[RMDB]
RNA sequence: GGGAACGACUCGAGUAGAGUCGAAAAACUUCAGCAGCGAAGAAGCGAAAGUGACGGUAGCUGCAGAAGAAGCGCCGGCUAACUACGUGCUAGCAGCCACGGUAAUACGUAGGGCGCAAGCGCAUUCAAAUUAUUAUAUAUUCGUAUAUAAUAAUUUAAAAGAAACAACAACAACAAC
Reactivity to 2A3 in 0.01 (KOAc 150mM, MgCl2 10mM, bicine 150mM(pH8.5), 24C), signal-to-noise 2, nucleotides 027 to 126: a000c000u040u010c020a040g000c000a000g000c010g030a190a000g020a040a010g080c010g070a190a060a030g000u020g020a010c000g030g030u030a010g000c000u000g000c040a010g000a010a000g040a060a090g000c010g000c010c020g040g010c020u040a070a020c000u010a000c020g010u010g010c030u040a050g060c060a040g060c070c030a050c050g030g040u060a040a040u060a100c000g010u010a030g030g010g000c040g000c040a020a010g000c030g000c010a050u120u110c030
Reactivity to DMS in 0.01 (KOAc 150mM, MgCl2 10mM, bicine 150mM(pH8.5), 24C), signal-to-noise 3, nucleotides 027 to 126: a070c030u010u000c000a030g010c010a000g020c000g020a290a210g000a050a300g010c010g020a070a130a070g010u010g010a300c000g020g000u000a230g000c000u010g000c000a100g010a010a000g010a080a070g000c000g020c000c300g010g010c030u020a190a110c000u000a010c020g010u000g020c060u000a050g020c040a110g010c160c190a040c120g000g000u000a070a100u010a010c000g000u000a010g000g010g010c080g000c000a030a070g020c020g010c000a070u030u040c060
Conditions: 150 mM KOAc, 10 mM MgCl2 and 150 mM bicine (pH 8.5), 24 C.
An RNA of 177 nucleotides, treated with 2A3 and DMS and read out base by base.
The 2A3 profile rests on 1,491 reads.
It was measured as part of the RMDB library OK1LIB.
For DMS, 2,620 sequencing reads were counted.